The data come from the RNA Mapping Database (RMDB), library TTRINS. The record gives the reactivity of an RNA of 177 nucleotides to DMS.
RNA sequence: GGGAACGACUCGAGUAGAGUCGAAAAGAUAUGGAAGUUCGGUGUUUCAUGCACAGAUGCUUGGAUUUAUAGUCGGAAACGACUAUUGUCAGCAUCUGUGCAUGAAAUUGCCGAGACUUCCUAAGUCCAGGCAAGUAUAGUUCGCUAUACUUGCCUGAAAAGAAACAACAACAACAAC
Reactivity to DMS in 0.01 (KOAc 150mM, MgCl2 10mM, bicine 150mM(pH8.5), 24C), signal-to-noise 2, nucleotides 027 to 126: g010a140u010a300u010g000g000a020a010g020u000u000c000g010g020u000g010u000u000u000c000a010u000g000c000a020c000a000g020a010u000g010c010u020u030g010g000a050u010u000u000a000u000a000g020u000c000g010g000a140a150a280c010g000a010c000u000a000u000u000g010u000c010a030g010c000a010u000c010u000g000u000g000c000a000u000g010a000a000a000u000u010g080c000c010g000a040g000a010c000u000u000c000c000u000a030a110g010u000c050